[RMDB]
RNA sequence: GGGAACGACUCGAGUAGAGUCGAAAAGCUCGCCUCACGGCGCCAGUCUCCACCAACUUGCAACGGGCGCUAGACACUGCGGCCUUCUUCCGUCUGCGAGCGGAGUUACAGCUCGAGAAAUCCGAGGUAUUUACAUGUACUUCGGUACAUGUAAAUAAAAAGAAACAACAACAACAAC
Reactivity to 2A3 in 0.01 (KOAc 150mM, MgCl2 10mM, bicine 150mM(pH8.5), 24C), signal-to-noise 5, nucleotides 027 to 126: g020c000u020c030g010c010c010u060c020a060c070g020g010c040g050c030c010a030g030u000c020u010c070c010a070c020c020a050a080c020u050u110g000c020a050a060c060g020g040g000c020g000c030u050a030g030a060c050a020c120u100g020c030g030g080c010c000u090u070c010u100u010c020c010g050u070c060u080g070c020g030a040g010c020g010g020a040g010u030u060a070c050a030g000c000u000c010g020a030g050a080a090a010u060c050c040g030a040g060g040
Reactivity to DMS in 0.01 (KOAc 150mM, MgCl2 10mM, bicine 150mM(pH8.5), 24C), signal-to-noise 9, nucleotides 027 to 126: g000c030u000c050g020c060c080u010c110a100c180g010g020c080g020c080c050a060g000u000c020u000c040c040a090c080c050a080a110c090u010u000g010c070a080a070c070g000g000g010c040g010c050u000a050g000a100c140a070c110u000g010c060g010g010c030c030u000u000c040u000u000c020c030g010u000c060u000g020c040g010a040g010c030g000g010a090g010u010u010a060c140a130g000c000u000c010g000a110g010a090a080a080u000c040c020g010a090g010g010
Chemical mapping of a 177-nucleotide RNA with 2A3 and DMS. For 2A3 the reverse transcriptase was SuperScript II with manganese. The RNA was probed in 150 mM KOAc, 10 mM MgCl2 and 150 mM bicine (pH 8.5) at 24 C.